The record gives the reactivity of an RNA of 177 nucleotides to 2A3 and DMS. The 2A3 profile rests on 888 reads.
[RMDB]
RNA sequence: GGGAACGACUCGAGUAGAGUCGAAAAAUUCACAAACAGGAGCAGAAGGGCCUAUAAUACCUCUAGACAACACCUUUGUAAAUGGACAAGCACCAUACAAUGAAGUACUAACUACCAGUAUGAAAGCUAGAUGAACUUGUUUCGACAAGUUCAUCUAAAAAGAAACAACAACAACAAC
Reactivity to 2A3 in 0.01 (KOAc 150mM, MgCl2 10mM, bicine 150mM(pH8.5), 24C), signal-to-noise 1, nucleotides 027 to 126: a000u020u010c060a050c020a070a150a010c020a080g030g030a020g030c020a040g030a170a030g110g000g010c030c010u120a120u090a170a100u080a050c000c050u040c020u000a050g010a010c000a020a020c020a020c040c100u020u070u040g120u050a170a190a060u070g000g000a020c030a030a020g000c010a030c040c000a000u020a070c030a020a140u110g030a020a000g000u030a010c020u070a040a050c030u080a060c050c030a010g070u080a030u080g100a220a050a000g000c020
Reactivity to DMS in 0.01 (KOAc 150mM, MgCl2 10mM, bicine 150mM(pH8.5), 24C), signal-to-noise 2, nucleotides 027 to 126: a190u010u000c020a100c120a050a080a110c110a070g000g020a030g000c010a040g040a100a100g000g000g000c080c050u000a050u010a070a080u000a050c020c040u000c020u010a050g000a050c040a010a090c090a080c090c030u020u000u000g010u000a110a090a050u000g010g000a060c060a120a090g030c060a080c020c030a040u000a020c080a090a040u000g000a110a090g010u000a050c060u000a060a070c140u010a040c040c060a080g000u000a080u020g020a080a080a100g010c170
The data come from the RNA Mapping Database (RMDB), library OK2TST. The RNA was probed in 150 mM KOAc, 10 mM MgCl2 and 150 mM bicine (pH 8.5) at 24 C.